RNA sequence: GGGAACGACUCGAGUAGAGUCGAAAAACAGCAUCAUCGUUAUAUCCCAAUCGGUCGGCGCACGGAUAGCACGUCUGGUAUGAUGAUGGCACACCUGCGCAUAACACUGAGUGAAUUCCUACGUGCAUACGGAAUAACUUUUCGAAGUUAUUCCGUAAAAAGAAACAACAACAACAAC
Reactivity to DMS in 0.01 (KOAc 150mM, MgCl2 10mM, bicine 150mM(pH8.5), 24C), signal-to-noise 9, nucleotides 027 to 126: a060c090a100g010c020a030u000c030a030u000c030g010u000u010a090u010a140u000c010c010c010a150a130u010c040g010g020u000c060g010g010c040g020c020a030c140g020g010a120u000a090g010c030a040c030g010u000c060u000g010g030u000a060u000g010a040u000g010a060u000g010g010c070a070c130a070c040c020u000g000c030g020c050a090u010a080a090c120a060c050u010g000a070g010u000g000a080a130u000u000c010c010u000a070c120g020u000g020c070a230
Reactivity to 2A3 in 0.01 (KOAc 150mM, MgCl2 10mM, bicine 150mM(pH8.5), 24C), signal-to-noise 5, nucleotides 027 to 126: a000c020a000g080c010a030u020c000a010u030c040g030u070u100a110u030a060u200c000c010c000a010a050u070c030g050g040u050c040g020g010c010g000c020a030c120g050g030a100u110a090g030c010a010c060g020u020c100u070g050g050u150a100u170g040a020u020g010a020u030g080g000c050a020c010a020c060c010u040g000c000g000c030a000u070a080a040c090a010c040u060g040a020g060u080g070a050a080u060u050c010c000u020a050c040g030u030g030c010a040
Source: RMDB library OK2TRN, as collected in RNAgym. Chemical mapping of a 177-nucleotide RNA with DMS and 2A3. For 2A3, 13,006 sequencing reads were counted. For DMS, 19,590 sequencing reads were counted. For DMS the reverse transcriptase was MarathonRT. 2A3 adducts were read by reverse transcription with SuperScript II with manganese.